Source: RMDB library OK2TRN, as collected in RNAgym. Structure probing data (2A3 and DMS) for a 177-nucleotide construct. For DMS the reverse transcriptase was MarathonRT. The 2A3 profile rests on 1,105 reads. The RNA was probed in 150 mM KOAc, 10 mM MgCl2 and 150 mM bicine (pH 8.5) at 24 C. Values cover nucleotides 27 to 126.
RNA sequence: GGGAACGACUCGAGUAGAGUCGAAAAUUGACCUUCACAACCUCAGAGCGGGUGGUGCUGACUUGUGAGCUCUCAAGGGUGGACUUCCCGGCAACCUGGUACAAGGAUGGGCAGAAGGUGGAGGAGACUAGUGCUCUAACUUCGGUUAGAGCACUAGAAAAGAAACAACAACAACAAC
Reactivity to 2A3 in 0.01 (KOAc 150mM, MgCl2 10mM, bicine 150mM(pH8.5), 24C), signal-to-noise 1, nucleotides 027 to 126: u070u050g090a040c010c000u040u050c020a030c030a070a070c020c030u110c030a020g000a010g120c000g060g000g000u050g000g040u090g060c010u040g050a090c000u010u070g000u020g140a080g100c050u010c010u030c210a070a000g010g050g030u040g000g060a010c000u020u020c000c000c020g070g010c010a030a030c000c000u000g030g070u150a020c030a080a000g070g010a010u090g030g010g010c040a020g070a160a000g060g030u010g000g000a020g030g000a060g030a000
Reactivity to DMS in 0.01 (KOAc 150mM, MgCl2 10mM, bicine 150mM(pH8.5), 24C), signal-to-noise 2, nucleotides 027 to 126: u010u000g010a110c010c030u010u000c040a060c030a120a100c060c050u010c060a070g010a100g030c060g020g010g030u000g000g030u000g010c030u000g010a120c070u000u000g010u000g000a140g020c110u000c040u000c060a050a070g010g010g060u000g000g020a080c070u000u000c000c020c030g000g020c090a090a070c070c010u000g000g000u000a070c150a080a070g010g000a090u000g000g010g000c080a060g000a080a080g000g030u000g010g030a060g010g010a160g020a170